[RMDB]
RNA sequence: GGGAACGACUCGAGUAGAGUCGAAAACUUGACCAGUCUUCUCGCCUAUUUGCGACGAAUACUGCGUCGUCAGGAUACACUUGUCGGGUAGAUAUGUCAGGACAUGAACUCCUUGGCGGGUAGCAAACCAUGCUCCAAGAUUCGUCUUGGAGCAUGGAAAAGAAACAACAACAACAAC
Reactivity to 2A3 in 0.01 (KOAc 150mM, MgCl2 10mM, bicine 150mM(pH8.5), 24C), signal-to-noise 5, nucleotides 027 to 126: c010u070u100g030a040c020c000a020g040u060c020u020u000c000u000c000g010c010c010u220a290u190u150u300g010c030g020a030c070g020a060a060u110a140c030u080g060c060g040u010c000g010u020c040a010g020g040a020u060a150c010a020c090u060u040g020u050c010g000g000g070u090a030g080a160u130a060u130g090u070c040a020g080g040a010c000a040u040g020a020a050c010u000c000c000u020u040g050g010c030g000g010g020u040a020g010c040a040a040a000
Reactivity to DMS in 0.01 (KOAc 150mM, MgCl2 10mM, bicine 150mM(pH8.5), 24C), signal-to-noise 3, nucleotides 027 to 126: c070u010u030g010a050c030c030a050g000u000c010u000u000c020u000c010g010c020c280u020a150u020u030u010g000c030g000a040c090g000a080a050u010a070c060u000g000c180g030u000c000g000u060c180a110g010g010a070u010a080c140a030c010u010u000g010u000c010g010g000g000u030a030g000a080u060a070u020g030u000c010a060g000g000a070c040a030u000g000a070a080c140u010c010c000u040u010g000g010c010g000g000g000u020a040g000c130a100a070a060

Chemical mapping of a 177-nucleotide RNA with 2A3 and DMS. For DMS the reverse transcriptase was MarathonRT.